Structure probing data (2A3 and DMS) for a 177-nucleotide construct. Values cover nucleotides 27 to 126. For DMS, 5,026 sequencing reads were counted. For 2A3 the reverse transcriptase was SuperScript II with manganese. The reactions ran in a buffer of 150 mM KOAc, 10 mM MgCl2 and 150 mM bicine (pH 8.5), at 24 C. It was measured as part of the RMDB library TTRDEL.
RNA sequence: GGGAACGACUCGAGUAGAGUCGAAAAGAUAUGGAUAGGACGCAGGGUCACAGUGGGUCGGAAACGACCCAUCACAGCCCUGAACUACGUCCGUCCUAAGUCAAAUCUGAACGUUCGCGUUCAGAAAGUUACAAAUAGACUUCGGUCUAUUUGUAACAAAAGAAACAACAACAACAAC
Reactivity to 2A3 in 0.01 (KOAc 150mM, MgCl2 10mM, bicine 150mM(pH8.5), 24C), signal-to-noise 4, nucleotides 027 to 126: g020a020u080a040u150g030g000a020u080a300g050g000a010c000g000c010a000g000g020g040u130c040a010c010a050g020u010g020g000g000u010c010g020g010a040a050a020c010g010a010c010c000c000a000u020c000a010c000a010g000c010c000c000u010g000a020a010c010u150a040c020g000u000c040c010g000u000c010c010u020a160a020g060u020c040a020a030a260u000c000u010g000a020a010c000g010u060u090c300g000c000g050u010u000c020a010g000a030a050a000
Reactivity to DMS in 0.01 (KOAc 150mM, MgCl2 10mM, bicine 150mM(pH8.5), 24C), signal-to-noise 5, nucleotides 027 to 126: g000a030u000a300u000g010g000a020u000a100g050g000a030c000g010c000a010g010g000g020u010c050a130c300a230g010u000g000g010g020u000c010g000g000a110a090a190c010g010a000c000c000c000a000u010c020a110c300a290g000c010c000c000u000g010a030a070c130u010a270c010g000u000c000c000g010u010c000c000u000a030a100g000u010c030a080a110a130u000c000u000g000a000a000c000g020u010u020c280g010c030g010u000u000c000a000g000a010a040a070